RNA sequence: GGGAACGACUCGAGUAGAGUCGAAAAUUAGGGGAUCGAAGAGGAUCAGAUACCCUCGUAGUCUUAACUAUAAACUAUGCCACUUAUGUGUUGUCUAACUCAUCUUUUUGAGUUUGGCAUUGCAUUACGAGCACAUUAAGUUCGCUUAAUGUGCUCGAAAAGAAACAACAACAACAAC
Reactivity to 2A3 in 0.01 (KOAc 150mM, MgCl2 10mM, bicine 150mM(pH8.5), 24C), signal-to-noise 3, nucleotides 027 to 126: u070u010a000g000g010g010g000a010u060c040g010a080a030g110a090g200g080a080u070c040a020g040a070u150a110c000c010c000u000c020g010u010a020g020u000c010u140u130a150a110c100u060a050u130a250a080a020c010u010a020u080g070c020c030a080c090u180u090a030u010g020u010g000u000u020g000u000c000u010a000a000c010u000c000a040u050c110u050u220u070u060u000g010a020g000u000u010u030g030g020c000a020u020u090g000c000a000u040u030a070
Reactivity to DMS in 0.01 (KOAc 150mM, MgCl2 10mM, bicine 150mM(pH8.5), 24C), signal-to-noise 2, nucleotides 027 to 126: u000u000a060g000g000g020g000a030u000c010g000a070a100g000a190g020g000a120u040c180a080g000a080u000a080c040c000c000u000c050g010u000a060g010u000c120u000u010a110a160c260u010a070u000a070a040a030c050u000a000u000g000c050c050a080c240u000u000a010u000g010u000g000u010u000g030u000c000u010a020a000c000u000c000a040u000c300u010u010u010u000u000g000a000g010u000u000u000g010g000c000a010u000u000g000c030a020u000u000a120

About this RNA: This 177-nucleotide RNA was probed chemically with 2A3 and DMS. 2A3 adducts were read by reverse transcription with SuperScript II with manganese. The reactions ran in a buffer of 150 mM KOAc, 10 mM MgCl2 and 150 mM bicine (pH 8.5), at 24 C. DMS adducts were read by reverse transcription with MarathonRT. For 2A3, 2,668 sequencing reads were counted.